[RMDB]
Annotation
An RNA of 177 nucleotides, treated with 2A3 and DMS and read out base by base. The data come from the RNA Mapping Database (RMDB), library OK2TST. The 2A3 profile rests on 1,397 reads. Reactivities are given for positions 27 through 126. The RNA was probed in 150 mM KOAc, 10 mM MgCl2 and 150 mM bicine (pH 8.5) at 24 C.

RNA sequence: GGGAACGACUCGAGUAGAGUCGAAAAGACGAGCUGCAUAGCCUGUCGGGCCGGAAGCUGUCCGAGGUCCUGGACCACCUAAAGACCCACGCAGAGGUGCCCAAGCCGCUCCAGGGCAUCGCCGCCAGCAUACGCGUAAGUUCGCUUACGCGUAUGCAAAAGAAACAACAACAACAAC
Reactivity to 2A3 in 0.01 (KOAc 150mM, MgCl2 10mM, bicine 150mM(pH8.5), 24C), signal-to-noise 1, nucleotides 027 to 126: g030a020c030g010a030g010c030u060g020c070a100u100a110g040c020c000u040g150u130c060g010g050g010c020c050g000g060a040a000g010c020u020g040u020c010c010g020a070g060g010u000c010c000u020g050g020a040c000c010a050c040c000u060a120a110a020g090a050c020c000c030a010c040g030c040a030g040a000g110g050u030g000c000c000c000a070a040g000c010c030g020c070u080c010c010a010g000g060g000c030a020u030c050g000c000c020g050c020c030a020
Reactivity to DMS in 0.01 (KOAc 150mM, MgCl2 10mM, bicine 150mM(pH8.5), 24C), signal-to-noise 2, nucleotides 027 to 126: g010a040c020g030a060g000c010u000g000c200a100u010a120g010c010c000u010g010u020c080g030g000g010c020c050g020g010a160a080g010c050u000g000u000c010c030g010a100g000g030u030c030c050u020g000g010a100c130c030a050c070c060u020a060a120a120g000a180c020c010c020a070c130g000c100a060g000a040g000g000u000g000c070c030c030a080a080g020c060c100g000c080u000c030c050a060g000g030g020c040a010u000c030g000c020c080g020c080c160a140